[RMDB]
Source information: The record gives the reactivity of an RNA of 177 nucleotides to 2A3. It was measured as part of the RMDB library OK1LIB.
RNA sequence: GGGAACGACUCGAGUAGAGUCGAAAAGAAGAGAAUACCGGUGUAAGUGCAGCCCGUCUUACACCGUAAGGCACAGCGGAAACGCUGAUGUGAAAUACAGGGCUGGGAGACGGAAGUAGACCGUCAACCGCAGGCCUAUAUUCGUAUAGGCCUGCGGAAAAGAAACAACAACAACAAC
Reactivity to 2A3 in 0.01 (KOAc 150mM, MgCl2 10mM, bicine 150mM(pH8.5), 24C), signal-to-noise 2, nucleotides 027 to 126: g140a070a010g070a000g100a110a040u140a160c070c060g010g000u000g000u000a010a000g000u000g140c060a000g020c000c000c000g000u010c000u020u000a000c000a000c000c000g000u020a020a040g190g010c000a030c000a000g000c030g030g020a100a010a000c000g000c000u000g040a090u010g000u010g090a150a080a000u240a040c040a010g000g000g000c000u010g030g030g040a100g000a000c000g010g010a120a200g100u160a010g090a060c000c000g030u000c000a000a000